[RMDB]
RNA sequence: GGGAACGACUCGAGUAGAGUCGAAAAUUGGUAUCGGGGCUGAAGCCAUCUUAGAAUUGCUCAACAAGAUUGACCUUAACUAUGAGUUUAGUAAGCUCAAUGAUGCGUUACGGAAGGCUAAGAAGGAUCUACGAAAGUGAUUCGUCACUUUCGUAGAAAAAGAAACAACAACAACAAC
Reactivity to DMS in 0.01 (KOAc 150mM, MgCl2 10mM, bicine 150mM(pH8.5), 24C), signal-to-noise 4, nucleotides 027 to 126: u000u010g020g020u000a040u000c070g000g010g010g010c070u000g010a090a100g000c030c030a050u010c030u000u000a050g010a070a070u000u000g020c050u000c090a070a070c100a090a070g010a170u000u000g010a040c070c020u000u000a070a070c020u000a050u000g010a110g010u010u000u000a060g010u000a060a050g000c150u010c000a010a070u010g020a100u010g010c100g000u000u000a100c120g000g000a050a040g000g010c020u000a040a050g010a090a080g000g010a120
Reactivity to 2A3 in 0.01 (KOAc 150mM, MgCl2 10mM, bicine 150mM(pH8.5), 24C), signal-to-noise 3, nucleotides 027 to 126: u060u070g030g060u070a030u090c040g010g030g000g000c040u040g020a020a000g050c000c000a020u010c040u030u050a040g100a110a050u060u110g010c000u020c050a030a040c040a030a110g100a210u020u070g020a050c000c000u030u050a040a020c000u020a060u140g090a070g190u090u070u030a070g020u060a060a000g010c010u000c030a020a050u090g040a070u120g000c080g020u030u020a010c020g030g050a040a030g030g000c030u020a060a000g020a040a020g100g020a020
An RNA of 177 nucleotides, treated with DMS and 2A3 and read out base by base. The data come from the RNA Mapping Database (RMDB), library OK2TRN. Conditions: 150 mM KOAc, 10 mM MgCl2 and 150 mM bicine (pH 8.5), 24 C. Values cover nucleotides 27 to 126. DMS adducts were read by reverse transcription with MarathonRT.